[RMDB]
This 177-nucleotide RNA was probed chemically with DMS. It was measured as part of the RMDB library OK2TRN. The reactions ran in a buffer of 150 mM KOAc, 10 mM MgCl2 and 150 mM bicine (pH 8.5), at 24 C. DMS adducts were read by reverse transcription with MarathonRT. The DMS profile rests on 946 reads.
RNA sequence: GGGAACGACUCGAGUAGAGUCGAAAAGGUUUAGCAUUAGGCUUGGAACCGGCUCACAAAGCCAAUGUUGAAGAUUGGGAUACGAUGAUUGAUACCAAUACCAAAGGUUUGGUGAAUAUGACGCGUGUAGGAUCGUCACAUUCGUGUGACGAUCCUAAAAAGAAACAACAACAACAAC
Reactivity to DMS in 0.01 (KOAc 150mM, MgCl2 10mM, bicine 150mM(pH8.5), 24C), signal-to-noise 1, nucleotides 027 to 126: g010g030u010u020u020a070g000c010a120u000u000a070g040g000c000u000u010g000g000a110a070c030c050g020g000c050u000c000a150c200a090a100a120g010c000c000a060a060u010g000u030u000g040a060a100g010a060u000u010g000g010g020a080u000a030c030g000a040u000g000a100u010u000g000a210u020a060c000c030a020a040u000a050c010c000a110a100a170g010g020u000u010u000g010g010u000g010a070a050u000a030u010g000a090c300g000c000g000u010g010